[RMDB]
RNA sequence: GGGAACGACUCGAGUAGAGUCGAAAAGGUGCAGGCAAGCCGGGAGACAGCGGCAGACCGAUCUUCGACAACAAAGGACGGGUGGUGGCCAUCGUCCUAGGAGGGGCCAACGAAGGUGCCCGCACGGCUCGACAAUGUAUUUCGAUACAUUGUCGAGAAAAGAAACAACAACAACAAC
Reactivity to 2A3 in 0.01 (KOAc 150mM, MgCl2 10mM, bicine 150mM(pH8.5), 24C), signal-to-noise 3, nucleotides 027 to 126: g090g000u020g000c020a010g010g000c020a040a060g040c000c000g020g030g000a080g030a030c040a040g020c000g010g010c020a010g070a060c000c020g120a130u000c030u070u040c020g070a070c030a170a010c030a070a230a020g020g000a000c040g040g030g010u050g030g060u070g060g020c010c010a060u100c020g030u000c000c000u000a040g000g060a040g020g020g010g030c030c010a040a020c070g030a050a000g050g020u050g060c010c010c010g000c000a030c030g060g000
Reactivity to DMS in 0.01 (KOAc 150mM, MgCl2 10mM, bicine 150mM(pH8.5), 24C), signal-to-noise 5, nucleotides 027 to 126: g000g010u010g010c010a050g020g010c040a090a130g020c050c030g010g010g000a140g010a120c120a050g020c050g010g010c030a100g010a120c050c040g000a100u010c030u000u000c030g000a090c140a090a070c120a040a100a070g010g010a050c020g000g000g020u000g020g020u000g010g010c030c020a050u000c020g010u000c010c010u010a060g020g010a130g010g010g000g000c020c050a070a140c090g000a060a030g010g010u000g000c010c010c020g010c060a040c100g010g000